This 207-nucleotide RNA was probed chemically with DMS and 2A3.
For DMS the reverse transcriptase was MarathonRT.
For DMS, 1,687 sequencing reads were counted.
It was measured as part of the RMDB library OK3TST.
For 2A3 the reverse transcriptase was SuperScript II with manganese.
The RNA was probed in 150 mM KOAc, 10 mM MgCl2 and 150 mM bicine (pH 8.5) at 24 C.
RNA sequence: GGGAACGACUCGAGUAGAGUCGAAAAUGAAGGGAGAAGCAUCAAUUAUGCUCCAUUUAUCAGAAGCAACCCAACCUUAGCUUCUGCCUGGAACAGUGGUCUUGUCCCCUGUACAACCUGAAAUGUAAUACUCACGACAACCCUUUGGGAUAGACAAUCCCUGACUAAUGUUCGCAUUAGUCAGGGAAAAAGAAACAACAACAACAAC
Reactivity to DMS in 0.01 (KOAc 150mM, MgCl2 10mM, bicine 150mM(pH8.5), 24C), signal-to-noise 1, nucleotides 027 to 156: u010g060a050a040g030g030g000a150g000a020a080g000c120a070u040c020a120a230u010u010a170u010g060c000u000c010c000a100u000u000u000a070u000c010a060g010a030a020g020c020a060a200c020c070c150a150a140c100c090u000u000a260g020c000u000u000c020u010g030c280c180u000g060g000a050a030c030a010g000u000g040g000u000c090u010u000g000u030c000c010c030c010u010g000u040a040c050a050a120c010c000u000g000a070a120a170u000g010u010a040a080u000a080c020u010c010a080c020g010a120c060a030a030c100c000c030u000u010u010g010g010g000a140u010a070g050a110c060a050a160
Reactivity to 2A3 in 0.01 (KOAc 150mM, MgCl2 10mM, bicine 150mM(pH8.5), 24C), signal-to-noise 2, nucleotides 027 to 156: u140g020a010a040g000g010g030a060g000a070a000g000c060a000u060c070a010a110u200u040a060u160g000c010u000c010c000a000u100u240u100a090u090c000a010g030a010a000g030c030a060a050c040c050c110a010a040c060c070u100u220a030g000c000u000u000c000u000g010c020c010u000g000g020a010a000c000a000g000u000g050g000u020c020u020u070g090u030c000c000c010c000u020g050u070a060c020a040a110c050c020u030g030a070a000a100u070g080u070a090a090u070a220c010u080c050a090c080g130a060c050a080a060c020c030c000u010u040u170g080g000g010a020u070a010g050a020c040a060a020